[RMDB]
RNA sequence: GGGAACGACUCGAGUAGAGUCGAAAAGUUUGCUGGAAGAGUCUCUUCAUACACAGCCUCAAUCUGUGGGACCACUGAAAGCAGCCAGACAGUGUCAGGCUCGGCCACCCCUGGGCUCAGUCACUCUUGGGAUUGGCCUCUCUGGCGCUUGGCCACACCACGGCUAUUAUUUCGAUAAUAGCCGUGGAAAAGAAACAACAACAACAAC
Reactivity to 2A3 in 0.01 (KOAc 150mM, MgCl2 10mM, bicine 150mM(pH8.5), 24C), signal-to-noise 2, nucleotides 027 to 156: g020u060u060u100g010c010u000g010g050a000a010g010a070g050u010c000u060c000u120u160c120a080u210a180c070a030c020a030g060c030c040u230c070a160a180u060c010u010g000u010g000g020g020a040c010c040a240c220u010g000a040a020a000g010c050a010g000c020c010a000g020a130c070a050g010u010g000u000c000a000g010g010c080u110c180g010g040c000c000a000c000c020c010c000u000g000g000g010c040u110c190a060g140u160c050a050c040u050c000u030u060g020g010g050a150u070u160g010g010c000c010u000c010u010c000u000g000g000c030g000c000u010u010g000g010c000c050a050c030a010
An RNA of 207 nucleotides, treated with 2A3 and read out base by base.
2A3 is a SHAPE reagent: it acylates the 2'-hydroxyl of flexible nucleotides of all four kinds.
Source: RMDB library OK3TST, as collected in RNAgym.